This 177-nucleotide RNA was probed chemically with DMS and 2A3. The data come from the RNA Mapping Database (RMDB), library TTRDEL. For 2A3 the reverse transcriptase was SuperScript II with manganese.
RNA sequence: GGGAACGACUCGAGUAGAGUCGAAAAGAUAUGGAUAGUGGCUUUUGACGAGGACAGGCUCGGAAACGAGCCUGUCUCGAUAAGCCAUCAUCCUAAGUCAAAAGCCUUUGCGUUCGCGCAAAGGCAACCUAUCUCAUCCCUUCGGGGAUGAGAUAGGAAAAGAAACAACAACAACAAC
Reactivity to DMS in 0.01 (KOAc 150mM, MgCl2 10mM, bicine 150mM(pH8.5), 24C), signal-to-noise 1, nucleotides 027 to 126: g000a020u000a110u000g000g000a000u000a060g030u000g000g020c010u010u010u020u020g040a130c190g010a180g000g000a000c000a000g000g020c000u000c000g020g020a000a000a000c000g010a010g000c000c000u000g020u000c020u020c040g000a030u000a000a010g000c000c010a000u000c060a000u000c000c000u020a020a120g000u000c000a060a140a160a210g000c000c000u000u000u000g010c000g000u000u000c250g000c000g030c010a000a000a000g010g010c000a010a000
Reactivity to 2A3 in 0.01 (KOAc 150mM, MgCl2 10mM, bicine 150mM(pH8.5), 24C), signal-to-noise 1, nucleotides 027 to 126: g000a010u010a000u030g010g000a000u010a060g010u010g020g000c050u070u100u140u300g300a280c210g040a110g000g040a000c000a000g030g000c010u000c020g020g000a010a060a010c020g010a030g000c020c000u000g020u000c000u010c010g000a000u000a000a000g000c000c020a000u020c020a000u000c030c000u020a050a010g000u020c030a050a000a060a210g000c000c000u000u000u000g030c000g020u020u060c290g000c000g000c090a000a000a000g000g040c000a010a000

The reactions ran in a buffer of 150 mM KOAc, 10 mM MgCl2 and 150 mM bicine (pH 8.5), at 24 C.